[RMDB]
RNA sequence: GGGAACGACUCGAGUAGAGUCGAAAAGAUAUGGACCCAUGGCAGCUUUUGACGACUUCCAAUCGGAAACGAUUGUGAAGUCGAUAAGCUGCAUGGGUCCUAAGUCAAAGAUCUUCUUCGGAAGAUCGGAUCUAGUUCAGUUCGCUGAACUAGAUCCAAAAGAAACAACAACAACAAC
Reactivity to DMS in 0.01 (KOAc 150mM, MgCl2 10mM, bicine 150mM(pH8.5), 24C), signal-to-noise 2, nucleotides 027 to 126: g010a060u020a300u020g000g010a010c020c000c000a000u000g010g020c030a000g020c010u000u010u000u000g000a230c160g010a010c000u010u000c000c010a010a000u000c000g000g010a120a130a250c000g030a020u000u000g020u010g010a000a000g010u010c000g010a020u000a030a010g010c000u010g000c000a000u000g000g000g010u000c000c000u000a000a050g010u000c030a100a160a160g010a010u000c000u000u000c000u000u010c240g010g000a010a000g000a010u000c000
Reactivity to 2A3 in 0.01 (KOAc 150mM, MgCl2 10mM, bicine 150mM(pH8.5), 24C), signal-to-noise 2, nucleotides 027 to 126: g030a010u090a070u150g000g010a010c020c040c030a030u070g300g080c000a010g000c060u170u190u300u300g300a180c070g010a010c000u010u020c020c000a030a000u000c000g000g000a090a040a010c050g000a030u040u060g050u170g080a010a000g000u000c010g000a000u000a010a010g020c000u000g000c000a000u000g000g000g020u000c000c000u000a000a000g000u000c010a000a060a100g000a010u020c000u000u000c000u030u140c300g140g000a000a000g000a010u000c040